Chemical mapping of a 207-nucleotide RNA with 2A3 and DMS.
The RNA was probed in 150 mM KOAc, 10 mM MgCl2 and 150 mM bicine (pH 8.5) at 24 C.
For DMS the reverse transcriptase was MarathonRT.
[RMDB]
RNA sequence: GGGAACGACUCGAGUAGAGUCGAAAAGACGAAAUCGACGGGCGCGUGAACCUAUCCGGUGCACACGGCAACAUCAAGCCGCUUUCGCCGUCGAGUAGCUUCUCUGCACGCCCCGGCGUUGGAUACGGCCAGAAAUCAGGAAUAACCGUGAACGUCACUACCAAUACGAUUUCGAUCGUAUUGGUAGAAAAGAAACAACAACAACAAC
Reactivity to 2A3 in 0.01 (KOAc 150mM, MgCl2 10mM, bicine 150mM(pH8.5), 24C), signal-to-noise 5, nucleotides 027 to 156: g030a010c050g040a050a020a080u050c020g010a020c020g040g000g010c100g000c010g040u000g020a030a020c000c010u040a100u070c070c030g020g010u020g010c060a030c010a010c040g000g010c040a110a060c030a300u230c060a100a030g020c010c020g030c060u130u160u150c020g000c010c020g030u080c030g010a010g000u000a010g000c030u130u090c060u020c050u090g080c050a010c040g020c000c010c010c000g000g000c010g020u040u020g020g000a070u060a150c010g000g020c010c010a030g180a080a170a060u230c090a070g050g100a090a080u130a110a060c010c010g000u030g030a050a020c020g030u010c030a010
Reactivity to DMS in 0.01 (KOAc 150mM, MgCl2 10mM, bicine 150mM(pH8.5), 24C), signal-to-noise 3, nucleotides 027 to 156: g030a100c040g020a100a100a090u000c010g000a060c010g020g000g020c040g000c050g030u010g010a030a060c120c010u010a060u000c080c070g040g030u000g030c050a120c300a060c030g000g030c020a060a160c080a190u000c080a160a280g050c010c000g010c030u010u000u000c040g020c080c020g010u010c020g030a050g020u000a050g020c070u010u000c030u000c040u000g000c010a050c070g010c030c010c000c020g020g000c070g000u000u010g030g000a140u000a040c010g000g000c010c020a190g010a060a100a120u020c110a200g030g020a190a100u000a050a040c030c000g040u000g000a050a220c050g010u000c020a240